RNA sequence: GGGAACGACUCGAGUAGAGUCGAAAAACGUCAGGUACGCCUGACGACCGUGAGACCUUCAUCCAACGGAUCGUCGGGCACGUACCUGCCCGGAGAAGGAGUAAACAAGAGGUGGUACGCCACCUCAAGUCUUGGACAGUUUCGACUGUCCAAGACUAAAAGAAACAACAACAACAAC
Reactivity to 2A3 in 0.01 (KOAc 150mM, MgCl2 10mM, bicine 150mM(pH8.5), 24C), signal-to-noise 3, nucleotides 027 to 126: a010c050g120u090c000a000g010g000u020a000c020g010c020c000u000g020a000c000g000a000c000c000g020u050g040a150g010a050c000c200u160u150c130a080u040c020c010a060a010c030g050g110a300u010c000g010u000c000g010g000g020c030a000c030g000u010a000c000c000u000g000c000c010c000g010g040a070g030a050a050g080g120a060g030u220a120a130a050c080a130a080g020a020g010g010u020g000g040u060a060c260g030c060c000a000c000c000u010c000a000
Reactivity to DMS in 0.01 (KOAc 150mM, MgCl2 10mM, bicine 150mM(pH8.5), 24C), signal-to-noise 3, nucleotides 027 to 126: a030c210g010u050c000a020g000g000u000a010c010g010c000c000u000g000a000c000g020a000c000c000g000u000g020a180g010a030c180c110u030u030c270a280u010c000c070a120a020c000g010g000a150u000c000g000u000c000g020g000g000c010a030c110g000u000a000c010c000u000g010c000c030c000g000g020a080g000a070a050g000g010a110g000u010a070a090a130c170a090a140g000a020g000g010u000g000g000u000a080c230g030c000c000a000c000c000u000c000a000

An RNA of 177 nucleotides, treated with 2A3 and DMS and read out base by base.
Conditions: 150 mM KOAc, 10 mM MgCl2 and 150 mM bicine (pH 8.5), 24 C.
Reactivities are given for positions 27 through 126.